[RMDB]
RNA sequence: GGGAACGACUCGAGUAGAGUCGAAAAAUGGCACAUGUAAAGGUAGCUUUUUGAAUGGAUCUUGUGGUUCACCUGGUUUUAUCCUUAGAGAUAAUAAAGUUUGUUUUGGUUAUAUGCAUCAAAUGGAAUUUAAUUCUGGUGUGCAUGUAGGUAGUGACUUACAUUCAAGGUUCGCCUUGAAUGUAAGAAAAGAAACAACAACAACAAC
Reactivity to 2A3 in 0.01 (KOAc 150mM, MgCl2 10mM, bicine 150mM(pH8.5), 24C), signal-to-noise 2, nucleotides 027 to 156: a000u090g020g000c030a040c050a070u080g020u170a060a020a140g080g020u040a030g030c000u180u060u000u090u230g120a070a050u060g030g010a020u050c050u080u070g040u090g030g040u050u050c040a050c040c010u010g000g020u040u050u100u040a010u030c000c010u040u140a070g020a020g020a130u040a070a010u040a020a180a060g020u030u040u040g010u000u010u050u080g030g010u030u010a050u020a010u060g020c010a010u010c020a120a090a120u140g030g010a060a040u040u200u210a170a220u150u000c040u070g070g000u030g010u010g040c010a010u060g000u010a000g020g060u040a020g060u100g060a010
Reactivity to DMS in 0.01 (KOAc 150mM, MgCl2 10mM, bicine 150mM(pH8.5), 24C), signal-to-noise 2, nucleotides 027 to 156: a040u010g000g020c040a060c060a100u000g000u040a090a080a070g000g040u010a080g010c020u000u010u000u010u010g000a090a100u010g030g010a040u000c020u010u060g040u010g020g020u010u000c040a090c040c020u010g020g020u000u010u030u000a060u000c010c010u010u010a110g010a150g020a040u000a030a040u010a050a070a100g030u010u000u010g010u000u000u000u000g000g030u010u010a040u000a060u010g010c050a010u000c060a020a070a100u010g010g020a030a060u000u000u010a100a150u000u000c010u000g000g030u000g030u000g020c020a020u000g020u010a000g030g010u000a080g010u000g000a140
The record gives the reactivity of an RNA of 207 nucleotides to 2A3 and DMS.
The data come from the RNA Mapping Database (RMDB), library OK3TST.
The DMS profile rests on 4,693 reads.